Annotation: Conditions: 150 mM KOAc, 10 mM MgCl2 and 150 mM bicine (pH 8.5), 24 C. This 177-nucleotide RNA was probed chemically with 2A3 and DMS. For 2A3 the reverse transcriptase was SuperScript II with manganese. Source: RMDB library TTRDES, as collected in RNAgym.
RNA sequence: GGGAACGACUCGAGUAGAGUCGAAAAAAAGAUAUGGAACAAAGCAAGCUCCUGUUACACGAUGAAACGCAUCGGAAACGAUGCGUGGAGUGUAACGCGAGUGAUGACCUUUGUUCCUAAGUCAAAACUAUCUAUAUACGUUCGCGUAUAUAGAUAGAAAAGAAACAACAACAACAAC
Reactivity to 2A3 in 0.01 (KOAc 150mM, MgCl2 10mM, bicine 150mM(pH8.5), 24C), signal-to-noise 6, nucleotides 027 to 126: a000a000a020g100a040u120a070u180g000g000a000a000c000a000a020a000g030c020a090a090g010c010u010c010c010u020g000u010u030a010c020a000c030g270a300u050g020a020a020a010c010g000c000a000u000c000g030g000a060a080a050c010g000a000u000g000c000g000u000g000g000a010g000u010g000u000a010a000c000g010c040g010a010g000u050g140a300u260g050a050c010c020u020u010u010g000u010u000c000c000u010a180a020g060u030c030a010a040a090a170
Reactivity to DMS in 0.01 (KOAc 150mM, MgCl2 10mM, bicine 150mM(pH8.5), 24C), signal-to-noise 9, nucleotides 027 to 126: a070a070a090g000a040u000a300u010g010g000a010a020c000a010a010a010g010c050a110a250g010c000u000c000c020u000g010u000u000a000c000a010c000g000a110u020g000a100a140a020c010g000c000a000u000c000g000g000a090a100a190c010g010a000u000g000c000g010u000g000g000a030g010u000g000u000a000a000c010g030c300g000a010g010u000g010a080u010g010a140c300c010u000u000u000g000u000u000c000c000u000a020a080g010u000c040a050a080a090a190